An RNA of 170 nucleotides, treated with 2A3 and DMS and read out base by base. The RNA was probed in 150 mM KOAc, 10 mM MgCl2 and 150 mM bicine (pH 8.5) at 24 C.
RNA sequence: GGGAACGACUCGAGUAGAGUCGAAAAUUCCAUUGACCCACUGCUCGAGGACGUCCUCCCUGUCUCCUCGGUUCUUCUUCGAUCCGGACCGGCUCAUCUCGGCAAGAGGCGGCAGUCCUCAGUACUCACGGUUCAACGUUCGCGUUGAACAAAAGAAACAACAACAACAAC
Reactivity to 2A3 in 0.01 (KOAc 150mM, MgCl2 10mM, bicine 150mM(pH8.5), 24C), signal-to-noise 9, nucleotides 027 to 129: u150u040c050c010a030u020u110g030a040c030c020c020a070c050u020g000c000u010c020g010a030g040g070a180c010g030u020c000c010u050c000c000c000u010g040u030c010u020c020c000u030c010g020g000u060u020c010u100u030c010u050u070c050g060a080u010c030c030g030g020a070c030c000g010g000c010u010c010a090u010c030u010c010g010g010c040a070a030g030a020g030g000c000g020g030c030a010g040u060c000c000u030c010a020g030u050a110c020u020c060a060c080g060
Reactivity to DMS in 0.01 (KOAc 150mM, MgCl2 10mM, bicine 150mM(pH8.5), 24C), signal-to-noise 8, nucleotides 027 to 129: u060u050c140c140a160u000u000g020a050c030c010c110a140c040u020g030c020u020c020g020a000g030g040a180c070g000u020c040c030u000c020c020c030u000g020u000c000u020c000c000u000c000g000g000u030u010c010u030u010c050u060u030c080g000a140u030c050c070g040g010a100c000c000g000g030c060u000c010a070u030c030u010c030g030g000c090a080a070g020a000g030g040c090g020g030c110a040g010u030c000c000u040c000a090g000u050a080c000u000c060a070c170g040
Overview: For DMS the reverse transcriptase was MarathonRT. It was measured as part of the RMDB library 15KLIB. The 2A3 profile rests on 47,080 reads.